RNA sequence: GGGAACGACUCGAGUAGAGUCGAAAAAGAUUUGCAUCCCAGACACAUUCACACUGGGCCAAGAGCAGCUGCCAUUGCAGAUUCGAGUCACGUCCUUUUUUCCUUCCUUCUCCUUCUUGGAGUUACAACGAGGAGUAUUCUUCGGAAUACUCCUCGUAAAAGAAACAACAACAACAAC
Reactivity to 2A3 in 0.01 (KOAc 150mM, MgCl2 10mM, bicine 150mM(pH8.5), 24C), signal-to-noise 5, nucleotides 027 to 126: a000g110a090u080u040u120g050c040a090u040c030c010c000a000g080a000c080a000c010a090u140u150c060a040c040a020c110u050g010g050g000c030c020a110a040g020a030g030c030a010g010c010u030g030c020c010a100u070u110g000c020a010g040a070u000u070c000g030a010g030u030c010a010c100g060u040c000c000u040u030u020u000u030u040c020c000u010u020c020c010u070u090c010u010c010c000u050u150c030u070u170g020g010a000g000u070u050a080c040a110
Reactivity to DMS in 0.01 (KOAc 150mM, MgCl2 10mM, bicine 150mM(pH8.5), 24C), signal-to-noise 2, nucleotides 027 to 126: a090g000a070u010u040u030g060c160a130u000c020c000c000a170g000a120c190a070c150a040u000u000c120a070c150a090c010u000g000g030g000c090c090a030a100g020a090g000c070a140g030c070u010g050c010c030a030u020u000g020c050a080g010a060u000u000c020g030a080g030u020c000a070c060g030u000c020c030u010u030u020u010u000u010c050c020u000u000c090c030u000u020c010u020c010c000u000u020c130u020u070g010g000a110g000u010u020a040c190a100
Source: RMDB libraries RFM100 and RFMREP, as collected in RNAgym. An RNA of 177 nucleotides, treated with 2A3 and DMS and read out base by base. For DMS the reverse transcriptase was MarathonRT.